[RMDB]
RNA sequence: GGGAACGACUCGAGUAGAGUCGAAAAUACGAGUCGACAAAACGCGAGAUGCGUAUUUGGAUGAGGACACCAGCCUUAAUUGGCAGACACGGGAAGUGUUGGUGCUUGACCAACCUGAUGUGAACAGUUGUAAUUAACUGUUCGCAGUUAAUUACAAAAAAGAAACAACAACAACAAC
Reactivity to 2A3 in 0.01 (KOAc 150mM, MgCl2 10mM, bicine 150mM(pH8.5), 24C), signal-to-noise 9, nucleotides 027 to 126: u150a020c040g010a020g060u020c010g030a060c030a020a090a030a010c040g030c030g040a090g040a210u240g080c010g010u030a190u020u030u030g070g010a080u070g050a030g040g030a020c010a020c020c010a010g020c000c000u060u070a110a090u190u040g010g000c010a010g020a010c010a000c010g080g030g130a140a080g030u030g010u070u010g000g010u040g030c120u060u100g070a040c000c000a010a030c000c010u070g050a090u080g050u030g040a050a010c010a040g020
Reactivity to DMS in 0.01 (KOAc 150mM, MgCl2 10mM, bicine 150mM(pH8.5), 24C), signal-to-noise 9, nucleotides 027 to 126: u020a090c080g000a120g010u000c010g010a130c070a060a060a100a060c120g010c030g010a150g010a100u030g010c010g010u000a040u010u000u000g000g010a090u010g010a090g000g010a110c030a040c020c020a110g000c010c010u000u000a090a120u010u000g000g010c010a160g000a030c020a020c020g000g010g010a140a120g010u000g000u000u000g000g020u000g010c080u010u010g000a090c020c010a050a080c060c020u010g000a100u010g010u000g000a030a040c080a020g010
Chemical mapping of a 177-nucleotide RNA with 2A3 and DMS. High 2A3 reactivity points to a flexible backbone, as in loops and unpaired stretches. Values are in units of 0.01, from 0 to 300, in steps of 10. 2A3 adducts were read by reverse transcription with SuperScript II with manganese. Conditions: 150 mM KOAc, 10 mM MgCl2 and 150 mM bicine (pH 8.5), 24 C. The data come from the RNA Mapping Database (RMDB), libraries RFM100 and RFMREP. DMS adducts were read by reverse transcription with MarathonRT.